Description:
Chemical mapping of a 177-nucleotide RNA with DMS and 2A3. 2A3 adducts were read by reverse transcription with SuperScript II with manganese. For DMS, 1,218 sequencing reads were counted. Values cover nucleotides 27 to 126. The 2A3 profile rests on 2,065 reads.
RNA sequence: GGGAACGACUCGAGUAGAGUCGAAAACCAGGGUCAACCUACGGAAAUCCCUGAGUUCCUCGGAUGUCCAGGCCGUCCCCUCUUCUAGAGAAGGGAGACUCCGGAACUUCUUCCAUGAUUGGGACGAGACUACUUGAUUGUUCGCAAUCAAGUAGUCAAAAGAAACAACAACAACAAC
Reactivity to DMS in 0.01 (KOAc 150mM, MgCl2 10mM, bicine 150mM(pH8.5), 24C), signal-to-noise 2, nucleotides 027 to 126: c120c000a000g010g020g010u000c050a090a230c010c010u010a120c140g010g010a040a080a070u000c000c000c010u020g000a110g010u010u000c020c020u000c150g020g010a040u000g010u000c030c040a060g020g000c060c010g000u000c000c000c000c020u000c010u000u010c080u010a170g000a090g010a050a030g010g000g030a090g000a030c020u020c040c020g010g010a050a100c110u000u000c070u010u010c020c040a070u010g000a180u010u000g010g000g000a080c070g010a140
Reactivity to 2A3 in 0.01 (KOAc 150mM, MgCl2 10mM, bicine 150mM(pH8.5), 24C), signal-to-noise 2, nucleotides 027 to 126: c020c020a020g020g000g000u060c020a040a070c020c030u110a090c130g000g030a050a080a050u090c030c000c010u020g030a090g040u010u040c000c020u000c050g040g000a050u070g030u000c020c050a070g060g040c030c020g000u030c000c010c000c010u020c000u100u000c060u120a100g030a020g010a190a060g000g000g000a030g010a020c030u000c020c010g020g010a020a010c040u130u040c000u070u020c010c030a080u120g020a120u150u110g000g010g000a000c030g010a010